[RMDB]
RNA sequence: GGGAACGACUCGAGUAGAGUCGAAAAAGUCAUUAACUAUAUCUCCAUAUGUUGUUAAUGCUUGCGUUAUCUAUAGUGAAACUUCUCUUAGGCUCUUAUCAUAUGUUCAUAUGUGAAAAGAUACCAAUGUCAUUAGUUCCUUCGGGAACUAAUGACAAAAAGAAACAACAACAACAAC
Reactivity to DMS in 0.01 (KOAc 150mM, MgCl2 10mM, bicine 150mM(pH8.5), 24C), signal-to-noise 2, nucleotides 027 to 126: a030g000u000c010a000u010u000a000a000c000u020a020u000a020u000c300u030c130c150a100u050a190u000g000u000u010g000u000u000a000a010u000g020c030u000u000g000c260g010u010u020a100u000c000u000a060u000a090g000u020g020a060a070a150c100u000u000c010u000c010u030u030a130g020g000c300u000c000u000u000a120u000c000a010u000a040u000g000u010u080c140a120u030a040u030g040u000g000a000a120a090a050g010a020u010a080c010c030a020a000
Reactivity to 2A3 in 0.01 (KOAc 150mM, MgCl2 10mM, bicine 150mM(pH8.5), 24C), signal-to-noise 2, nucleotides 027 to 126: a010g090u060c010a000u010u010a000a000c030u060a030u000a030u070c100u170c130c120a030u090a010u160g070u050u020g020u060u000a010a000u000g010c000u030u030g070c000g020u050u070a170u060c050u030a080u100a130g140u130g090a080a050a050c000u020u010c010u000c000u000u030a050g000g000c030u040c000u090u070a090u120c020a000u030a000u020g150u220u230c090a050u090a000u260g000u010g000a000a000a110a000g020a030u040a030c000c000a110a100
This 177-nucleotide RNA was probed chemically with DMS and 2A3. DMS adducts were read by reverse transcription with MarathonRT. The RNA was probed in 150 mM KOAc, 10 mM MgCl2 and 150 mM bicine (pH 8.5) at 24 C. 2A3 adducts were read by reverse transcription with SuperScript II with manganese. It was measured as part of the RMDB libraries RFM100 and RFMREP.